[RMDB]
RNA sequence: GGGAACGACUCGAGUAGAGUCGAAAAAGGCUCAAGGUGCAUUUGGCCUAGUACUUGUCUCGCAACUGAGGUCUCAAGGAUUUCCUCUUAGAAAAGCACCCGCUUCUUUCAUUUGGUCUUUUUGCCCAGCCCUUUCUGGUCUAUGUAGGGUGUAGAACUAGGUAAAUCGAUUCGUCGAUUUACCUAGAAAAGAAACAACAACAACAAC
Reactivity to 2A3 in 0.01 (KOAc 150mM, MgCl2 10mM, bicine 150mM(pH8.5), 24C), signal-to-noise 5, nucleotides 027 to 156: a020g100g010c090u100c130a050a060g020g000u020g020c030a100u100u090u230g020g010c000c010u010a020g010u020a040c060u030u070g060u060c040u040c060g070c060a110a130c110u140g040a030g010g060u040c040u030c080a050a040g040g020a080u060u070u050c010c030u030c050u060u110a040g050a080a140a010a010g000c000a040c000c000c010g080c030u090u100c020u040u210u110c050a170u120u120u180g020g000u030c000u040u080u060u100u130g020c020c010c010a020g020c010c010c000u070u220u110c060u110g090g030u050c040u080a080u150g050u050a030g000g010g010u040g000u030a060g020a090a040
Reactivity to DMS in 0.01 (KOAc 150mM, MgCl2 10mM, bicine 150mM(pH8.5), 24C), signal-to-noise 2, nucleotides 027 to 156: a050g010g010c020u000c080a070a060g030g040u000g010c050a210u010u000u000g020g010c000c020u000a130g020u000a060c020u020u000g020u010c020u010c030g050c030a100a190c230u010g000a080g030g010u010c030u010c020a060a100g030g000a160u010u000u000c010c000u000c060u010u000a100g000a080a110a090a180g010c020a040c010c030c070g010c030u000u000c040u000u000u010c020a150u000u000u000g010g010u010c010u010u000u000u000u000g010c020c010c020a190g030c030c020c040u000u000u000c050u020g010g000u010c050u000a060u000g040u000a100g020g020g040u000g030u000a060g000a060a210
Source: RMDB library OK3TST, as collected in RNAgym. The record gives the reactivity of an RNA of 207 nucleotides to 2A3 and DMS. DMS (dimethyl sulfate) methylates the pairing face of unpaired adenines and cytosines. Reactivities are given for positions 27 through 156.